[RMDB]
The data come from the RNA Mapping Database (RMDB), library OK2TRN. An RNA of 177 nucleotides, treated with DMS and 2A3 and read out base by base. For DMS the reverse transcriptase was MarathonRT. For 2A3, 1,245 sequencing reads were counted. DMS (dimethyl sulfate) methylates the pairing face of unpaired adenines and cytosines. For 2A3 the reverse transcriptase was SuperScript II with manganese. Reactivities are given for positions 27 through 126.

RNA sequence: GGGAACGACUCGAGUAGAGUCGAAAAUUGUGAUUCAUGACUGGGGUGAAGUCGUAACAAGGUAACCGUAGGGGAACCUGCGGUUGGAUCACCUCCUUACCUUAAAGAAGCGUACUUUGCAGUGCUCGUUCACAGCAUGGUUCGCCAUGCUGUGAACAAAAGAAACAACAACAACAAC
Reactivity to DMS in 0.01 (KOAc 150mM, MgCl2 10mM, bicine 150mM(pH8.5), 24C), signal-to-noise 2, nucleotides 027 to 126: u030u000g010u010g020a070u010u010c050a050u000g000a070c030u010g020g020g050g000u010g010a100a020g020u000c010g020u000a070a110c170a060a070g040g010u010a060a060c000c000g010u000a000g010g000g010g040a150a100c000c000u010g020c000g010g000u010u020g010g000a060u010c090a010c050c180u000c010c030u000u000a040c050c030u000u000a050a150a130g000a160a110g010c030g000u000a030c050u000u000u000g010c070a070g010u000g000c050u000c100
Reactivity to 2A3 in 0.01 (KOAc 150mM, MgCl2 10mM, bicine 150mM(pH8.5), 24C), signal-to-noise 1, nucleotides 027 to 126: u090u090g030u030g090a090u040u090c060a020u180g030a010c030u050g040g050g000g140u030g080a040a030g020u010c010g030u060a010a120c060a090a040g020g000u020a000a010c000c020g010u000a010g000g010g000g110a050a110c000c000u020g000c000g010g000u010u000g020g010a010u020c000a000c050c040u000c010c000u020u040a020c000c000u030u060a100a100a030g090a110a020g020c010g000u000a020c050u030u010u060g030c040a050g010u000g050c010u050c130